[RMDB]
RNA sequence: GGGAACGACUCGAGUAGAGUCGAAAAGGAUGCUGUUUGGCCGGUAUUAGCAUCGUAGUGCGAGGCUGCGAAGCAGUCGAGUCGUAUGACCGGCCUUUUGCGACGAGUCGAAAGACGAGCACUACGAGGGAUGGACGGUGUUCGCAUCGUCUAUCCCAAAAGAAACAACAACAACAAC
Reactivity to DMS in 0.01 (KOAc 150mM, MgCl2 10mM, bicine 150mM(pH8.5), 24C), signal-to-noise 9, nucleotides 027 to 126: g010g000a080u010g020c030u000g000u010u010u010g000g010c000c010g010g000u010a080u040u030a070g010c170a300u000c000g010u000a010g010u000g000c000g000a300g000g000c000u000g000c010g010a120a140g010c000a010g010u000c000g000a120g010u000c000g020u000a080u030g000a030c000c000g000g000c010c000u000u010u020u010g010c000g000a010c010g000a300g000u000c000g010a080a100a140g000a010c000g000a160g000c000a000c000u000a010c000g000a040
Reactivity to 2A3 in 0.01 (KOAc 150mM, MgCl2 10mM, bicine 150mM(pH8.5), 24C), signal-to-noise 9, nucleotides 027 to 126: g110g020a070u160g040c080u080g050u200u200u110g030g000c010c010g000g000u080a110u180u200a130g070c050a050u010c010g000u000a000g000u000g000c000g000a020g010g000c000u000g000c060g110a140a040g010c000a000g000u000c000g010a010g010u000c000g010u040a100u160g040a030c000c000g020g000c000c010u050u040u060u060g010c000g000a000c000g000a000g000u010c000g020a070a020a010g000a000c010g000a000g000c000a000c000u000a000c000g010a030